[RMDB]
RNA sequence: GGGAACGACUCGAGUAGAGUCGAAAACCGUACACUUCGGUGUACGGAAAAAUCCUAAGUCUUGAGGCAAGCGACAUGGACCCAUCGGAAACGAUGGAGUCCAACAGCGCUUGCUACCCACCAAGAUAUGGAAAAAAGGGGGAGUUCGCUCCCCCAAUCGACUUAAUCUGUUCGCAGAUUAAGUCGAAAAAGAAACAACAACAACAAC
Reactivity to 2A3 in 0.01 (KOAc 150mM, MgCl2 10mM, bicine 150mM(pH8.5), 24C), signal-to-noise 2, nucleotides 027 to 156: c000c000g010u000a010c000a000c010u070u100c300g080g010u000g000u000a000c000g000g010a080a000a010a000a000u040c020c010u030a120a000g030u010c010u000u010g000a020g030g000c000a000a000g000c010g150a220c050a110u060g020g000a000c000c000c000a040u000c000g000g060a100a030a040c010g000a010u010g000g040a020g010u000c000c000a000a000c030a020g000c020g000c000u010u000g000c000u000a000c020c010c010a070c010c010a000a000g000a000u050a070u080g040g040a020a050a030a170a090a210g000g030g010g020g000a000g010u050u090c150g030c090u000c000c000c030c000c000a000a000
Reactivity to DMS in 0.01 (KOAc 150mM, MgCl2 10mM, bicine 150mM(pH8.5), 24C), signal-to-noise 1, nucleotides 027 to 156: c010c000g000u020a040c000a010c000u000u000c280g020g070u040g000u000a040c030g000g030a010a000a080a130a100u000c010c040u000a220a300g000u000c000u000u000g000a110g030g000c000a030a000g080c010g000a040c130a300u000g000g000a040c030c000c030a000u000c000g030g000a160a160a240c000g040a040u000g000g000a160g020u010c000c000a010a010c020a130g000c050g030c000u000u000g000c030u030a000c000c000c030a300c160c000a000a000g040a000u000a300u000g000g000a000a080a150a020a080a170g000g000g050g030g000a000g050u000u030c040g070c010u000c000c000c000c000c000a000a040
This 207-nucleotide RNA was probed chemically with 2A3 and DMS.
It was measured as part of the RMDB library RNAMAK.
As a SHAPE reagent, 2A3 marks flexible, mostly unpaired nucleotides at the ribose 2'-OH.
The DMS profile rests on 1,421 reads.
The RNA was probed in 150 mM KOAc, 10 mM MgCl2 and 150 mM bicine (pH 8.5) at 24 C.